The record gives the reactivity of an RNA of 207 nucleotides to 2A3 and DMS.
Values are in units of 0.01, from 0 to 300, in steps of 10.
For 2A3 the reverse transcriptase was SuperScript II with manganese.
Source: RMDB library M2RFPK, as collected in RNAgym.
The reactions ran in a buffer of 150 mM KOAc, 10 mM MgCl2 and 150 mM bicine (pH 8.5), at 24 C.
The 2A3 profile rests on 3,044 reads.
DMS (dimethyl sulfate) methylates the pairing face of unpaired adenines and cytosines.
DMS adducts were read by reverse transcription with MarathonRT.

[RMDB]
RNA sequence: GGGAACGACUCGAGUAGAGUCGAAAAAUCAACCUUCGUUCUGUAAACGGGGUUGGAUCCGACUCUCAUAGGCUCUCCAACCCAACUCCUACUCAAUACGUCCUCGUCGUACAGAACGGUAACAUGUAAAACGAAGGCUGCUUCGGCAGCCUUCGAACACAAUAUGGUAGUUCGCUACCAUAUUGUGAAAAGAAACAACAACAACAAC
Reactivity to 2A3 in 0.01 (KOAc 150mM, MgCl2 10mM, bicine 150mM(pH8.5), 24C), signal-to-noise 4, nucleotides 027 to 156: a000u080c020a010a050c000c020u070u070c020g000u010u020c010u020g050u070a040a050a070c030g020g000g000g000u000u000g000g000a020u240c000c000g090a080c040u050c020u010c140a130u140a190g000g000c000u010c010u000c010c000a020a000c020c000c000a020a010c010u050c000c020u080a110c010u030c070a070a150u080a180c050g100u100c030c030u090c040g040u030c010g010u020a010c000a010g010a010a000c010g000g010u110a070a020c060a090u160g070u200a040a080a000a040c010g000a000a000g010g000c000u000g000c020u020u050c130g080g000c010a000g010c010c000u000u000c000g000a000a000
Reactivity to DMS in 0.01 (KOAc 150mM, MgCl2 10mM, bicine 150mM(pH8.5), 24C), signal-to-noise 2, nucleotides 027 to 156: a100u010c050a070a150c030c020u010u000c000g050u000u000c010u000g020u000a110a110a030c050g020g000g010g050u000u000g000g010a030u010c010c030g040a070c020u010c090u000c150a130u000a100g010g020c040u000c080u000c020c050a070a090c000c000c030a070a070c050u000c030c020u000a080c050u020c040a100a140u010a070c120g030u000c040c020u000c000g020u010c070g000u000a110c000a040g000a040a050c000g020g010u000a050a080c060a120u010g020u010a050a070a090a170c020g030a020a030g000g020c010u010g000c020u000u010c290g020g040c000a010g000c000c000u020u000c000g000a010a140